RNA sequence: GGGAACGACUCGAGUAGAGUCGAAAAAUGCACCAGUGUGGAUCGUUGCCCAAGACGGAUCGUUGGGCUCUAAGCUUUCUGCAGGCAACAUUGUUACACCUGUGAUGAACGUGGCUGCUUCGCAGUCUACCAGAGACUCGUUCGCGAGUCUCUGGUAAAAAGAAACAACAACAACAAC
Reactivity to DMS in 0.01 (KOAc 150mM, MgCl2 10mM, bicine 150mM(pH8.5), 24C), signal-to-noise 2, nucleotides 027 to 126: a050u020g020c060a070c040c030a070g020u030g040u010g010g000a040u000c070g040u000u000g000c010c000c030a120a090g010a180c120g010g000a040u010c070g010u000u000g010g010g000c060u020c080u010a120a080g000c060u000u010u000c000u000g000c020a200g000g020c030a020a020c010a100u000u000g010u010u000a120c080a050c040c030u000g010u000g010a120u000g010a080a080c110g020u000g030g010c060u000g000c020u010u000c140g000c030a030g010u000c060
Reactivity to 2A3 in 0.01 (KOAc 150mM, MgCl2 10mM, bicine 150mM(pH8.5), 24C), signal-to-noise 1, nucleotides 027 to 126: a000u130g000c030a030c060c010a000g000u020g020u030g270g020a130u060c050g000u000u060g000c000c000c000a000a040g080a040c040g000g060a080u060c030g080u060u100g060g060g000c080u050c050u100a030a000g020c020u000u120u030c140u090g030c000a070g010g020c000a010a010c000a030u000u300g080u150u100a050c000a050c050c040u070g060u070g100a130u080g010a090a030c030g030u030g000g000c020u000g020c010u130u130c070g000c000a000g000u000c000
Structure probing data (DMS and 2A3) for a 177-nucleotide construct.
DMS adducts were read by reverse transcription with MarathonRT.
2A3 adducts were read by reverse transcription with SuperScript II with manganese.
Values cover nucleotides 27 to 126.
The reactions ran in a buffer of 150 mM KOAc, 10 mM MgCl2 and 150 mM bicine (pH 8.5), at 24 C.
DMS (dimethyl sulfate) methylates the pairing face of unpaired adenines and cytosines.